Chemical mapping of a 207-nucleotide RNA with DMS and 2A3. For 2A3 the reverse transcriptase was SuperScript II with manganese. The DMS profile rests on 2,530 reads. Source: RMDB library M2RFPK, as collected in RNAgym. The reactions ran in a buffer of 150 mM KOAc, 10 mM MgCl2 and 150 mM bicine (pH 8.5), at 24 C. DMS adducts were read by reverse transcription with MarathonRT.
[RMDB]
RNA sequence: GGGAACGACUCGAGUAGAGUCGAAAAAGACGGAAACCCAUCGACUGUCACCAGAUGCUGCAUCACCUGAUCACUGAUGGCUCAACGGUAUCCGGCGGUACAACUGAAUACUUGUAGCUUCCUUUUGAAAAGGAGUUCAUCUUCGGAUGAACUCCAACUUGGGAAAUAUGUUCGCAUAUUUCCCAAGAAAAGAAACAACAACAACAAC
Reactivity to DMS in 0.01 (KOAc 150mM, MgCl2 10mM, bicine 150mM(pH8.5), 24C), signal-to-noise 1, nucleotides 027 to 156: a070g000a170c020g000g000a050a050a130c070c010c030a140u000c050g050a080c020u000g020u000c030a030c030c000a010g020a050u000g010c000u020g000c080a090u020c080a040c020c020u020g010a140u000c110a160c130u000g030a110u000g000g000c030u000c000a100a060c030g010g020u000a050u010c000c010g010g000c000g020g080u000a070c100a100a060c060u000g010a050a090u000a040c040u010u000g010u010a040g080c020u000u000c020c000u000u020u000u000g070a080a100a080a140g010g000a060g010u000u000c000a030u000c000u020u000c300g070g030a020u010g000a000a010c000u000c000c000a000a010
Reactivity to 2A3 in 0.01 (KOAc 150mM, MgCl2 10mM, bicine 150mM(pH8.5), 24C), signal-to-noise 6, nucleotides 027 to 156: a010g030a020c030g020g050a070a050a030c030c020c020a070u090c060g080a060c030u050g000u060c010a010c040c020a020g030a080u050g030c030u040g030c030a040u050c030a060c020c020u060g040a070u070c020a020c070u030g010a030u060g060g000c050u040c090a060a060c040g020g000u010a050u020c010c010g040g010c030g050g030u080a040c020a070a030c070u120g060a080a050u050a100c020u050u080g040u120a030g020c020u050u060c000c000u070u180u070u150g060a100a080a040a030g000g000a010g000u000u000c000a000u000c010u020u070c170g080g000a000u000g000a000a000c000u000c000c000a010a000